[RMDB]
RNA sequence: GGGAACGACUCGAGUAGAGUCGAAAAUCAUGGGGCUUCCAACACGACAAUAGGCAAAAGAGAAGAAACAUACAUGUAAGAGACAAGCAAAACCCAGAACCAUCACUUAUGAAGGAUGUCCUCAUCACCCUCUUUUGCUGCCUGUCAAAACCGGUGAAAAAUACCUAUCAUUCGUGAUAGGUAUUUUAAAAGAAACAACAACAACAAC
Reactivity to 2A3 in 0.01 (KOAc 150mM, MgCl2 10mM, bicine 150mM(pH8.5), 24C), signal-to-noise 5, nucleotides 027 to 156: u150c040a050u060g000g010g000g000c020u060u030c030c020a070a040c090a030c100g040a010c020a030a090u050a110g030g000c010a000a010a010a000g030a010g040a150a010g030a050a130a010c050a030u230a040c040a040u130g010u070a070a010g040a010g020a080c040a060a020g050c030a030a070a040a090c020c010c020a010g050a070a050c040c010a050u110c030a040c080u160u140a070u250g040a060a030g010g010a010u010g040u080c000c010u020c010a040u080c010a070c010c010c010u010c010u000u000u000u010g000c000u020g000c010c030u010g010u010c020a000a020a030a070c060c050g070g030u090g040a000
Reactivity to DMS in 0.01 (KOAc 150mM, MgCl2 10mM, bicine 150mM(pH8.5), 24C), signal-to-noise 5, nucleotides 027 to 156: u000c050a090u000g020g010g020g030c040u000u000c020c020a060a170c050a100c060g030a070c050a070a140u000a140g010g010c010a030a020a040a080g010a080g000a100a110g000a170a050a070c040a110u000a090c060a070u000g020u010a060a080g010a140g010a100c030a050a070g010c050a050a030a060a100c030c020c020a300g000a080a100c050c040a060u010c050a090c060u000u000a060u000g020a060a200g010g030a060u000g010u010c050c030u000c030a060u010c050a060c060c020c000u000c020u000u000u000u000g010c010u000g020c100c090u000g000u020c010a060a050a080a090c040c030g010g020u010g000a020